Background:
This 207-nucleotide RNA was probed chemically with 2A3. For 2A3 the reverse transcriptase was SuperScript II with manganese.

[RMDB]
RNA sequence: GGGAACGACUCGAGUAGAGUCGAAAACUGGCUCAUACUCAGAUCCCACAAAGGAUGUUGCUUACUACGGAUAGCAGGUCGGUGGCCAUGAAGGUUGGAACCCGCUGAGGAAUGUGUAACAACUCACCUGCCGAAGUGCGCAGCUCCGAAAAUGGAUGUAUAGUCUCGUGUUCGCACGAGACUAUACAAAAGAAACAACAACAACAAC
Reactivity to 2A3 in 0.01 (KOAc 150mM, MgCl2 10mM, bicine 150mM(pH8.5), 24C), signal-to-noise 2, nucleotides 027 to 156: c090u020g010g000c000u040c010a080u000a070c040u010c010a000g010a060u040c010c160c000a020c080a020a010a000g090g000a060u280g010u000u010g020c010u070u000a030c000u030a010c010g000g030a030u040a070g020c000a010g030g000u000c030g060g000u060g040g000c010c010a010u080g090a110a230g050g010u140u120g020g070a090a080c080c030c000g010c040u040g000a030g040g040a300a070u040g030u000g000u060a160a020c010a050a020c010u000c010a000c000c020u000g000c000c020g090a080a020g000u020g040c000g010c010a000g010c000u000c030c000g070a070a040a000a010u110g110g010a020u020
Reactivities are given for positions 27 through 156. Conditions: 150 mM KOAc, 10 mM MgCl2 and 150 mM bicine (pH 8.5), 24 C.